[RMDB]
Source information
This 207-nucleotide RNA was probed chemically with 2A3. Reactivities are given for positions 27 through 156. The RNA was probed in 150 mM KOAc, 10 mM MgCl2 and 150 mM bicine (pH 8.5) at 24 C. The 2A3 profile rests on 990 reads.
RNA sequence: GGGAACGACUCGAGUAGAGUCGAAAAGGGGUCUCCACGAGAGCUCCUGUAGAGCUUGGAUUUACUGAAGCCUCCACGGUUGUCAGCUCUACCUGAGCUCUGUGGAGACGGAGGCACCCAAAAGAACAAGUCAAACGUUCGCGUUUGACUUGUUCAAUCGAUGACAAAUGUUCGCAUUUGUCAUCGAAAAAGAAACAACAACAACAAC
Reactivity to 2A3 in 0.01 (KOAc 150mM, MgCl2 10mM, bicine 150mM(pH8.5), 24C), signal-to-noise 2, nucleotides 027 to 156: g040g000g020g010u010c000u010c000c000a010c120g260a050g000a000g000c000u020c030c100u110g030u020a010g000a000g000c050u070u200g100g020a130u300u300u280a080c000u030g070a100a040g050c000c030u030c050c060a030c020g020g010u070u120g040u030c000a000g000c000u000c000u020a010c010c050u120g000a000g000c000u040c000u000g000u000g000g000a000g000a000c010g000g010a000g000g000c030a020c010c010c010a030a200a000a070g000a000a000c000a000a000g010u000c010a010a000a000c000g040u090u100c300g030c010g170u000u020u000g000a000c000u000u000g010u010u000c010a000a000